An RNA of 177 nucleotides, treated with 2A3 and DMS and read out base by base.
DMS adducts were read by reverse transcription with MarathonRT.
Values are in units of 0.01, from 0 to 300, in steps of 10.
The RNA was probed in 150 mM KOAc, 10 mM MgCl2 and 150 mM bicine (pH 8.5) at 24 C.
For 2A3 the reverse transcriptase was SuperScript II with manganese.

RNA sequence: GGGAACGACUCGAGUAGAGUCGAAAAGCUCGGUUGCCGUGGUUGCGGGCCCUGCCCGCCCGCCAGCUCGCUGACAGCACGACUCAGGGCGGAGGGAAGUAGGUCCGUUGGUCGGUCGGGAACGAGGCGGACUAGUCAUUUUCGAAUGACUAGUCCGAAAAGAAACAACAACAACAAC
Reactivity to 2A3 in 0.01 (KOAc 150mM, MgCl2 10mM, bicine 150mM(pH8.5), 24C), signal-to-noise 6, nucleotides 027 to 126: g050c000u020c030g150g030u150u070g110c010c010g020u020g010g030u050u030g000c000g000g020g000c000c000c010u050g020c000c000c000g070c130c000c000g000c000c010a030g020c030u050c030g070c080u080g040a090c020a060g030c070a030c070g070a030c030u060c150a110g060g040g000c010g010g010a040g010g010g010a040a030g030u160a050g010g010u020c020c000g010u080u200g040g010u030c040g010g130u090c030g000g000g000a030a010c010g000a010g060g000
Reactivity to DMS in 0.01 (KOAc 150mM, MgCl2 10mM, bicine 150mM(pH8.5), 24C), signal-to-noise 3, nucleotides 027 to 126: g000c010u000c020g000g010u000u000g020c000c000g000u020g020g020u000u000g030c020g010g030g040c020c030c050u000g040c030c010c030g010c120c010c000g000c010c000a100g010c150u020c080g000c070u000g000a090c170a100g020c020a280c130g010a060c100u000c130a160g000g020g000c000g000g000a300g000g010g000a050a020g040u040a090g000g000u000c000c030g020u000u010g010g000u000c000g020g000u010c030g000g000g000a060a070c030g000a050g030g030